[RMDB]
RNA sequence: GGGAACGACUCGAGUAGAGUCGAAAAGGGUUUGAGCCAUCGCCCGAAUAAGAUGGAUGAUACAAGUCGCCAUUGUACGCGACGUAGUACGUACUCAUUAGUGCGAAAGCACGGUUAGUCCGACUGGGCAGGGACGAUCUUCUGUCAAUACUUAGAAGCUAUACUGACGUUUCGACGUCAGUAUAGCAAAAGAAACAACAACAACAAC
Reactivity to 2A3 in 0.01 (KOAc 150mM, MgCl2 10mM, bicine 150mM(pH8.5), 24C), signal-to-noise 1, nucleotides 027 to 156: g040g040g010u000u080u180g100a030g020c020c010a030u010c020g000c000c050c020g020a070a100u090a080a030g020a040u040g040g030a040u080g030a000u070a070c030a050a150g000u000c010g000c010c020a110u110u180g040u120a030c020g010c030g020a000c020g010u000a000g050u030a050c050g000u010a010c000u000c010a020u060u020a060g000u020g020c040g010a080a030a000g000c000a000c000g000g010u060u050a040g010u000c070c000g010a040c000u120g000g000g000c000a020g010g010g030a040c040g060a050u030c000u130u000c000u050g070u010c030a020a110u080a150c110u070u130a060g060a070a010
Reactivity to DMS in 0.01 (KOAc 150mM, MgCl2 10mM, bicine 150mM(pH8.5), 24C), signal-to-noise 1, nucleotides 027 to 156: g010g030g000u020u000u000g020a080g040c040c030a050u010c040g000c020c000c010g030a130a100u020a050a100g010a020u000g030g030a080u050g000a140u000a030c030a140a140g010u020c000g010c010c040a120u000u020g020u000a110c110g040c010g020a020c020g000u000a110g000u000a020c030g040u000a020c040u010c020a120u010u000a150g020u000g000c010g000a060a160a180g030c000a140c050g000g030u020u000a130g000u010c010c000g010a240c020u000g010g000g010c030a130g000g000g010a050c030g000a060u000c060u000u000c110u020g010u000c020a050a160u000a050c080u000u000a090g030a130a140
The record gives the reactivity of an RNA of 207 nucleotides to 2A3 and DMS. The 2A3 profile rests on 1,371 reads. For 2A3 the reverse transcriptase was SuperScript II with manganese. Values are in units of 0.01, from 0 to 300, in steps of 10. Conditions: 150 mM KOAc, 10 mM MgCl2 and 150 mM bicine (pH 8.5), 24 C. In probing experiments dimethyl sulfate is read out at A N1 and C N3, which are open when not base-paired.